[RMDB]
RNA sequence: GGGAACGACUCGAGUAGAGUCGAAAAGCUGCCUCUGACGUCCUUCUCCCCCGGAAACGGGGCCGAAGGGUGGUAAAGCGCGUCGCCUGGCGCUGGCACGGGUAUGCGUGGCGGUCGACCCUGGCCGAUAUAUGCCGUAGUUCGCUACGGCAUAUAUAAAAGAAACAACAACAACAAC
Reactivity to DMS in 0.01 (KOAc 150mM, MgCl2 10mM, bicine 150mM(pH8.5), 24C), signal-to-noise 7, nucleotides 027 to 126: g010c030u000g010c010c010u000c130u010g020a160c050g000u000c000c010u000u000c010u000c300c000c010c010c010g010g000a060a070a180c020g020g010g010g030c060c070g000a010a010g010g000g010u000g000g000u010a070a110a100g010c010g010c010g020u000c120g020c050c040u000g010g000c020g000c030u000g000g010c030a060c100g010g000g020u000a040u010g010c040g020u000g010g010c020g000g010u000c030g000a130c030c020c030u000g020g000c010c010g000
Reactivity to 2A3 in 0.01 (KOAc 150mM, MgCl2 10mM, bicine 150mM(pH8.5), 24C), signal-to-noise 3, nucleotides 027 to 126: g010c020u030g020c000c020u060c070u120g050a010c010g020u040c000c010u000u020c010u020c000c010c020c000c020g000g010a030a010a000c000g020g000g010g010c010c000g010a000a010g000g020g020u030g000g010u100a080a090a030g030c050g000c000g060u060c080g060c020c050u070g050g010c040g020c080u080g080g010c090a040c060g040g000g020u080a040u260g030c040g020u030g050g020c020g010g020u040c030g040a120c010c010c030u040g000g010c000c020g000